[RMDB]
RNA sequence: GGGAACGACUCGAGUAGAGUCGAAAAGCGGCGCAACACCGUCACGAACGACCAGACGGGAAACACGAUUAGCCAAGCGUUGGCCGACAUAAUCCAGACAGACACGCCGGUUCGGUUCAACGCCGCGAAUAUCACGGUAGGUGACGACCAAGAACUCCGAGUUAUCCAUGUUCGCAUGGAUAACUCGAAAAGAAACAACAACAACAAC
Reactivity to 2A3 in 0.01 (KOAc 150mM, MgCl2 10mM, bicine 150mM(pH8.5), 24C), signal-to-noise 2, nucleotides 027 to 156: g010c000g000g010c100g000c100a110a150c010a030c070c000g030u030c000a030c090g270a300a050c070g030a040c000c060a040g020a050c020g010g030g090a080a170a000c200a020c140g130a130u110u090a020g020c060c030a040a030g000c010g000u000u000g010g010c030c000g020a020c030a050u250a050a030u100c040c000a030g150a180c000a010g050a020c050a080c100g060c060c000g000g000u050u000c000g030g000u280u290c010a020a030c000g060c000c010g000c000g000a010a000u180a030u120c060a050c070g140g050u060a030g000g070u040g040a080c010g030a050c040c040a130a000g050a100a050c010u070c080
Structure probing data (2A3) for a 207-nucleotide construct. 2A3 adducts were read by reverse transcription with SuperScript II with manganese. High 2A3 reactivity points to a flexible backbone, as in loops and unpaired stretches. Values cover nucleotides 27 to 156. The 2A3 profile rests on 739 reads. Conditions: 150 mM KOAc, 10 mM MgCl2 and 150 mM bicine (pH 8.5), 24 C.